[RMDB]
An RNA of 207 nucleotides, treated with DMS and 2A3 and read out base by base.
2A3 adducts were read by reverse transcription with SuperScript II with manganese.
The DMS profile rests on 3,305 reads.
The RNA was probed in 150 mM KOAc, 10 mM MgCl2 and 150 mM bicine (pH 8.5) at 24 C.
It was measured as part of the RMDB library OK3TST.
RNA sequence: GGGAACGACUCGAGUAGAGUCGAAAAGCAGCAUCAGCGCCCAGGUGGGUAGAAAUCUUGUCUUCUAUUUCCACAGAAAGUAAGGUGCCCAACAGUGUUUGUUGAAUGAAUGAAUGAAUGAAUGAAUGAGUGAGAGGCAUCCUUCCUUCUCAGUCAAAGUAAUUUUAUUAUUCGUAAUAAAAUUACUAAAAGAAACAACAACAACAAC
Reactivity to DMS in 0.01 (KOAc 150mM, MgCl2 10mM, bicine 150mM(pH8.5), 24C), signal-to-noise 1, nucleotides 027 to 156: g010c050a060g000c040a070u000c020a060g050c060g000c020c010c010a140g000g030u010g010g040g050u010a030g000a030a070a040u000c130u000u010g010u000c040u010u000c000u020a060u000u000u000c070c030a060c050a140g010a040a060a050g030u000a100a130g000g000u000g020c020c020c010a040a100c040a110g040u020g010u000u010u000g010u000u010g000a080a120u010g020a080a050u010g000a100a070u010g000a090a090u010g020a030a040u000g000a040a060u000g000a080g020u000g000a080g000a080g010g020c040a090u010c060c030u010u000c030c000u000u000c020u000c010a050g010u000c000a040a100
Reactivity to 2A3 in 0.01 (KOAc 150mM, MgCl2 10mM, bicine 150mM(pH8.5), 24C), signal-to-noise 1, nucleotides 027 to 156: g060c060a010g000c010a050u040c060a040g070c000g030c000c010c010a050g030g100u030g000g000g010u030a000g070a040a020a040u220c140u160u100g080u070c010u060u000c000u040a020u080u030u010c000c020a030c010a030g180a050a060a000g020u060a050a070g030g030u030g020c000c010c000a060a080c030a040g030u000g070u190u160u100g010u050u010g020a060a080u040g050a070a010u080g020a030a010u060g000a040a020u050g030a140a010u060g030a040a000u110g010a050g100u030g010a010g000a000g020g020c000a050u030c040c000u040u070c010c010u120u010c000u040c010a050g110u110c040a020a000